[RMDB]
RNA sequence: GGGAACGACUCGAGUAGAGUCGAAAAAUGGACCGAGAGGUGAAGAUGGAGCAGGUACAGAUUGGAUUGAUUACGGCGGAAGGAUAAUAACUCACGAAGGGAGCUUGAAGUGGUUUCCUGGCCCUCGAGUUAAAGGUCAAUUCGUUGACCUUUAACUAAAAGAAACAACAACAACAAC
Reactivity to DMS in 0.01 (KOAc 150mM, MgCl2 10mM, bicine 150mM(pH8.5), 24C), signal-to-noise 9, nucleotides 027 to 126: a090u020g000g010a090c040c030g010a100g010a100g010g010u000g010a070a070g010a080u010g000g000a070g010c050a040g010g010u000a060c110a050g010a090u020u020g010g010a090u010u010g010a100u010u010a070c110g000g010c060g010g010a110a070g010g000a070u020a050a070u030a070a080c070u010c050a090c100g010a090a070g010g000g000a070g010c060u000u010g010a070a110g020u010g000g010u000u010u000c010c020u000g000g010c010c000c010u000c090g010
Reactivity to 2A3 in 0.01 (KOAc 150mM, MgCl2 10mM, bicine 150mM(pH8.5), 24C), signal-to-noise 9, nucleotides 027 to 126: a000u070g030g010a010c010c020g020a020g010a010g090g030u070g040a040a030g030a040u090g010g030a030g010c040a020g010g050u060a060c020a030g060a040u070u090g050g020a030u050u090g050a030u080u140a040c020g020g000c010g030g020a020a030g010g010a010u040a140a030u060a070a050c030u050c030a040c050g060a040a050g040g000g010a040g020c020u020u040g040a090a040g050u090g040g010u030u040u010c000c000u020g030g000c010c000c000u030c030g020